Conditions: 150 mM KOAc, 10 mM MgCl2 and 150 mM bicine (pH 8.5), 24 C. An RNA of 207 nucleotides, treated with 2A3 and read out base by base. The 2A3 profile rests on 352 reads. Source: RMDB library OK3TST, as collected in RNAgym.
[RMDB]
RNA sequence: GGGAACGACUCGAGUAGAGUCGAAAAUUAUGUAGGAAUGAUUGAUUACAUCAUUGACCGUUGGUAAUCAACUUAAUAUUCAGCCCCUUUCCCUUACUGGGGUGGGAUGGGGGUAGGGCUGUGGGACUGAAAGGUCCAGCCUUCUAAUCACAGGGUACGUAAAUGGACUCUUCGGAGUCCAUUUACGAAAAGAAACAACAACAACAAC
Reactivity to 2A3 in 0.01 (KOAc 150mM, MgCl2 10mM, bicine 150mM(pH8.5), 24C), signal-to-noise 1, nucleotides 027 to 156: u140u070a080u180g100u260a080g120g150a010a080u150g080a170u040u020g010a010u020u000a000c020a050u080c080a070u140u190g120a250c150c040g070u070u240g060g000u000a000a000u040c000a000a030c020u150u060a020a090u130a140u250u090c000a010g010c000c000c000c000u000u060u000c000c000c020u010u190a070c040u100g000g000g050g000u050g030g000g040a010u050g000g000g050g000g050u060a130g010g000g020c030u080g030u180g120g040g020a000c050u070g000a020a050a050g090g000u000c000c000a000g000c010c040u000u070c010u060a050a010u140c000a000c000a100g040g000g060u160a120